[RMDB]
RNA sequence: GGGAACGACUCGAGUAGAGUCGAAAAACGCAUCAUACGUGAUGCGAGAACUACAGUUCCGCUCCUCUAGCACACAGAGGUCAAUUGGGUGCGACCCGCCCCUCUCCCGUGGGUCAACGGGAACCAAAAAAGACCCUUUAGUUCGCUAAAGGGUCAAGGUUAUGUGAAAGUUCGCUUUCACAUAACCAAAAGAAACAACAACAACAAC
Reactivity to 2A3 in 0.01 (KOAc 150mM, MgCl2 10mM, bicine 150mM(pH8.5), 24C), signal-to-noise 5, nucleotides 027 to 156: a000c010g000c010a010u010c020a020u070a170c180g100u100g030a040u080g000c030g000a060g010a020a030c100u250a100c060a090g010u030u010c010c010g020c050u040c010c000u020c020u040a040g040c060a030c010a010c020a120g000a000g030g020u020c020a030a080u110u100g040g010g000u020g020c030g050a140c000c000c000g030c020c010c000c000u060c020u000c000c000c000g000u010g000g000g070u080c060a000a000c000g000g000g010a000a010c020c030a040a030a060a070a000a010g010a000c000c000c000u000u000u000a020g010u020u040c130g000c190u000a000a000a000g000g000g000u000c000a000a000
Reactivity to DMS in 0.01 (KOAc 150mM, MgCl2 10mM, bicine 150mM(pH8.5), 24C), signal-to-noise 1, nucleotides 027 to 156: a140c050g070c010a030u000c020a160u000a090c220g030u010g020a030u000g020c010g020a070g010a080a090c050u000a090c070a190g020u000u010c000c010g050c030u010c020c020u000c060u000a160g000c080a130c020a000c080a070g040a010g010g020u010c000a020a100u010u020g010g020g020u000g010c110g010a170c040c010c020g030c020c030c000c020u000c090u040c010c060c020g040u000g010g010g020u000c120a040a070c000g050g000g000a050a090c040c040a000a050a050a110a070a150g010a020c000c000c010u030u000u000a020g010u010u010c300g080c020u020a000a030a000g010g000g020u010c000a000a040
Structure probing data (2A3 and DMS) for a 207-nucleotide construct. Values cover nucleotides 27 to 156. The RNA was probed in 150 mM KOAc, 10 mM MgCl2 and 150 mM bicine (pH 8.5) at 24 C.